[RMDB]
RNA sequence: GGGAACGACUCGAGUAGAGUCGAAAAGAUAUGGACCAUUACAUUUGUCAGCUAACCUGCAACUCAGUUCGGAAACGAACUGGGAGGUUGCCUGUUAGCUUGGAUUUAAUGUAAUGGUCCUAAGUCACUCAGGGAUAUAGUUCGCUAUAUCCCUGAGAAAAGAAACAACAACAACAAC
Reactivity to DMS in 0.01 (KOAc 150mM, MgCl2 10mM, bicine 150mM(pH8.5), 24C), signal-to-noise 3, nucleotides 027 to 126: g020a060u000a300u000g000g010a010c000c000a010u000u010a010c000a010u000u000u000g010u000c010a050g010c000u000a010a000c010c050u010g010c010a010a020c000u000c000a030g010u010u000c000g010g010a120a120a300c000g010a020a010c000u000g000g010g030a040g000g000u000u000g020c000c030u000g010u000u000a000g000c010u010u020g000g010a020u000u010u000a000a000u000g010u000a010a000u000g000g010u000c000c000u000a010a110g000u000c040a240
Reactivity to 2A3 in 0.01 (KOAc 150mM, MgCl2 10mM, bicine 150mM(pH8.5), 24C), signal-to-noise 1, nucleotides 027 to 126: g010a000u100a070u210g000g000a010c010c000a030u000u060a020c000a010u000u000u000g030u030c000a020g040c000u010a010a020c000c060u000g000c000a010a020c040u070c300a000g020u050u020c020g000g010a110a130a150c030g010a020a020c010u000g000g000g000a140g240g040u030u010g000c000c010u000g020u020u000a060g030c000u040u120g070g000a030u190u170u300a040a000u030g000u000a000a000u000g030g000u000c000c000u000a000a000g000u010c000a040